[RMDB]
RNA sequence: GGGAACGACUCGAGUAGAGUCGAAAACGACAGCUUUUCGAAGCUGUCGAUUGGCAAUGGCUAGGACCGGCCAGACAAAGGUCCGAUAGCAAAUCGUAACGAAGCUCGCCUGCUUCGGCAGGCGAAACACGCUUGAUAAUUUCGAUUAUCAAGCGUGAAAAGAAACAACAACAACAAC
Reactivity to DMS in 0.01 (KOAc 150mM, MgCl2 10mM, bicine 150mM(pH8.5), 24C), signal-to-noise 4, nucleotides 027 to 126: c010g000a010c000a000g000c000u010u000u000u010c180g010a010a010g010c000u000g000u000c000g010a040u000u010g010g020c170a120a130u000g000g000c000u000a130g020g000a020c000c010g000g000c010c010a090g000a110c150a030a070a110g000g010u000c010c000g000a100u000a060g010c060a050a070a060u010c070g010u010a050a100c140g010a080a090g000c090u000c010g000c000c000u010g010c000u000u000c180g020g010c010a000g000g000c000g020a010a040a130
Reactivity to 2A3 in 0.01 (KOAc 150mM, MgCl2 10mM, bicine 150mM(pH8.5), 24C), signal-to-noise 3, nucleotides 027 to 126: c000g010a000c000a010g010c010u040u020u050u150c160g130a010a010g000c010u000g000u000c000g000a040u020u080g070g000c080a080a200u100g020g000c000u010a100g020g010a010c010c010g010g010c000c010a070g080a080c110a040a140a010g000g000u010c010c010g020a100u100a020g040c010a060a080a170u100c070g080u100a070a120c110g040a040a000g030c010u020c010g000c010c010u010g000c000u030u050c070g030g000c000a000g000g000c000g020a010a000a000